The record gives the reactivity of an RNA of 207 nucleotides to 2A3 and DMS. Conditions: 150 mM KOAc, 10 mM MgCl2 and 150 mM bicine (pH 8.5), 24 C. 2A3 adducts were read by reverse transcription with SuperScript II with manganese.
[RMDB]
RNA sequence: GGGAACGACUCGAGUAGAGUCGAAAACAAUUGCACCUAAAGCGGGGCGUGAGUAUAACAAGCUUGUGACGGACACACGCAAUUGGGUUAAUGACCUUAUAGAUGAAGUAGAGGAUUUUCCCUCAGACGUUCGGACGUUCUUCACCAAUCUUGCAACCCACGUAGAGAGAUUCGUCUCUCUACGUGGAAAAGAAACAACAACAACAAC
Reactivity to 2A3 in 0.01 (KOAc 150mM, MgCl2 10mM, bicine 150mM(pH8.5), 24C), signal-to-noise 6, nucleotides 027 to 156: c070a020a070u090u120g010c040a090c020c030u140a120a120a030g040c040g010g000g010g000c020g020u080g030a040g050u140a070u060a300a080c080a040a030g050c030u080u050g030u040g020a040c050g030g000a020c020a010c000a010c080g010c030a040a130u100u050g010g000g010u030u040a030a040u110g120a040c010c000u110u100a110u070a120g160a080u130g040a080a030g020u140a050g020a000g050g010a020u060u030u040u080c020c030c000u010c020a030g040a170c040g050u070u060c030g040g040a020c030g030u030u000c000u030u020c010a040c060c060a050a060u050c070u040u060g000c040a030a100c010
Reactivity to DMS in 0.01 (KOAc 150mM, MgCl2 10mM, bicine 150mM(pH8.5), 24C), signal-to-noise 2, nucleotides 027 to 156: c060a070a130u020u010g020c020a130c020c040u000a050a140a160g000c060g020g020g000g050c020g050u000g010a150g020u000a090u010a110a100c090a050a180g000c090u000u000g050u000g060a190c000g050g020a120c020a070c080a130c060g000c060a070a080u000u000g000g050g000u000u000a050a110u000g020a110c020c020u020u000a160u000a050g000a100u020g020a070a110g030u000a090g030a060g020g000a160u000u000u000u000c070c000c000u000c060a120g020a110c040g010u000u000c050g040g000a140c090g000u000u000c000u020u010c040a070c030c040a040a110u000c060u000u010g000c030a070a200c180
The 2A3 profile rests on 3,484 reads. DMS adducts were read by reverse transcription with MarathonRT.